[RMDB]
RNA sequence: GGGAACGACUCGAGUAGAGUCGAAAAGCGGCGGUCUGCUGGAACGACCUGACGGCCAUCGGCCUGAUGAACGGCAUUGCCCGCGCCGGGCUGGUGCCGGGCGAGGAUAUUUCCGUAACCGGCUAUAGGCUAAUUUAGGUUUCGACCUAAAUUAGCCAAAAGAAACAACAACAACAAC
Reactivity to DMS in 0.01 (KOAc 150mM, MgCl2 10mM, bicine 150mM(pH8.5), 24C), signal-to-noise 1, nucleotides 027 to 126: g040c110g010g010c030g020g010u000c120u010g000c000u000g020g000a050a040c180g000a160c010c000u010g020a140c100g000g010c050c040a030u000c060g030g010c000c000u000g000a080u000g010a100a110c050g000g010c050a230u000u010g010c110c000c020g020c300g010c100c010g020g000g010c020u010g010g000u000g010c000c000g000g000g000c020g010a010g010g000a130u000a130u000u000u000c000c000g030u000a070a040c030c000g020g020c020u000a110u020a070
Reactivity to 2A3 in 0.01 (KOAc 150mM, MgCl2 10mM, bicine 150mM(pH8.5), 24C), signal-to-noise 1, nucleotides 027 to 126: g060c000g090g010c030g000g000u050c130u090g020c090u150g030g060a050a020c030g040a050c000c010u010g020a020c000g060g000c100c020a040u050c090g000g020c010c000u030g030a060u060g060a160a030c000g030g010c110a200u030u300g020c000c000c000g050c020g000c010c000g050g010g000c040u050g010g040u010g000c000c000g000g000g020c030g070a020g020g020a020u050a100u280u040u040c010c000g010u030a010a070c000c000g080g000c050u090a140u140a230